[RMDB]
The record gives the reactivity of an RNA of 177 nucleotides to DMS.
RNA sequence: GGGAACGACUCGAGUAGAGUCGAAAAGCGUGGAUGCUCGUUCGCAACCCGUGGUUGAAGCUGGUCUACGCGACCUACAGCCAGCAGCGCGCCAACGCUGUAAGCCGCCAGAUCCGAGCGAUCGUCGAUGGCGCGCUAGAUUCGUCUAGCGCGCCAUAAAAGAAACAACAACAACAAC
Reactivity to DMS in 0.01 (KOAc 150mM, MgCl2 10mM, bicine 150mM(pH8.5), 24C), signal-to-noise 1, nucleotides 027 to 126: g020c030g000u000g030g000a080u000g010c120u000c120g020u000u030c060g010c060a080a040c000c040c170g040u000g020g050u000u040g010a060a160g020c060u000g010g000u000c020u000a030c120g020c070g000a060c000c020u010a050c040a110g000c000c100a100g000c040a110g130c080g030c020g060c060c150a060a140c060g010c030u050g000u000a060a100g000c030c000g000c000c120a020g020a060u000c110c000g010a070g030c080g020a100u000c020g000u000c210g010